[RMDB]
RNA sequence: GGGAACGACUCGAGUAGAGUCGAAAACCCCAUAAUUUCGAUUAUGGGGAAAGGAAAACAGGCUAGCACCGGCCUGAUAAAGGUCCGAACAAAUAAUUAAAAUCUAGGUUGUAUUCGUACAACCUAAAUGAAAACUAUCAUUCGUGAUAGUUUUCAUAAAAGAAACAACAACAACAAC
Reactivity to DMS in 0.01 (KOAc 150mM, MgCl2 10mM, bicine 150mM(pH8.5), 24C), signal-to-noise 4, nucleotides 027 to 126: c000c000c000c000a000u000a010a010u000u000u020c120g010a030u000u000a010u000g000g010g000g010a020a040a100g000g010a090a070a160a170c030a010g010g000c010u000a100g020c110a060c130c050g000g010c010c000u000g000a060u000a050a090a100g000g000u000c020c010g000a130a120c110a060a090a060u000a080a100u020u010a070a060a080a080u010c120u000a010g000g000u000u000g010u000a020u010u010c190g000u000a010c000a000a010c000c000u000a010a050
Reactivity to 2A3 in 0.01 (KOAc 150mM, MgCl2 10mM, bicine 150mM(pH8.5), 24C), signal-to-noise 2, nucleotides 027 to 126: c000c000c010c000a000u020a000a000u020u090u130c150g110a010u010u000a010u000g000g010g010g050a070a040a020g050g020a040a040a030a040c010a000g010g000c000u030a040g110c070a050c090c040g020g000c000c000u000g000a000u100a010a100a000g070g030u000c020c000g040a050a010c040a080a130a070u230a100a070u300u220a110a150a020a060u050c060u040a000g010g010u000u000g000u020a010u020u110c170g010u020a000c000a000a000c000c000u010a020a030